[RMDB]
This 177-nucleotide RNA was probed chemically with DMS. Conditions: 150 mM KOAc, 10 mM MgCl2 and 150 mM bicine (pH 8.5), 24 C. Source: RMDB library OK2TRN, as collected in RNAgym.
RNA sequence: GGGAACGACUCGAGUAGAGUCGAAAAAAUUAUACUCCCUCCACUGAUUGAGUCUGAGGGGGUAUGAGACACUCUGGCCUGGAGUAACCUGCCCAAGGUCAAGUGGUUGGUGGAGGGGCUGGCGCUGUGUACAUCCCAUCUUCGGAUGGGAUGUACAAAAAGAAACAACAACAACAAC
Reactivity to DMS in 0.01 (KOAc 150mM, MgCl2 10mM, bicine 150mM(pH8.5), 24C), signal-to-noise 1, nucleotides 027 to 126: a100a080u000u000a020u000a030c040u000c000c000c000u000c000c300a060c010u010g020a100u020u000g000a100g010u000c110u000g000a140g000g030g000g000g010u000a010u010g030a120g000a100c100a060c020u000c140u000g000g010c060c040u020g000g030a080g010u000a090a060c100c070u000g010c030c030c000a080a070g010g010u000c030a080a060g010u000g000g000u000u000g000g010u000g020g000a120g000g000g000g000c070u000g000g000c050g060c080u000g000